[RMDB]
Annotation:
Source: RMDB library OK2TST, as collected in RNAgym. Structure probing data (DMS) for a 177-nucleotide construct. Values cover nucleotides 27 to 126.

RNA sequence: GGGAACGACUCGAGUAGAGUCGAAAACUUACCAAGGCUUCCCAGAAAGGCCCACAAGUUAGCAUUCACCUUAAGCAAGAAUCUCAGGUGUGUCCUUCCCAUGCCGUGGUGGUGUGUGGAUGUCUGGGAAUUUGAGUGGUUUCGACCACUCAAAUUCAAAAGAAACAACAACAACAAC
Reactivity to DMS in 0.01 (KOAc 150mM, MgCl2 10mM, bicine 150mM(pH8.5), 24C), signal-to-noise 1, nucleotides 027 to 126: c070u000u000a100c040c040a120a100g020g000c100u000u000c010c000c020a100g000a080a110a100g000g000c020c040c020a040c090a150a090g010u010u010a040g010c120a060u000u000c060a060c080c090u010u000a070a100g020c140a050a140g030a120a080u020c050u000c080a020g010g030u000g000u000g000u010c010c060u000u000c020c000c020a070u010g030c000c000g030u010g010g060u000g010g020u000g000u000g000u000g020g000a020u000g000u000c020u000g010g000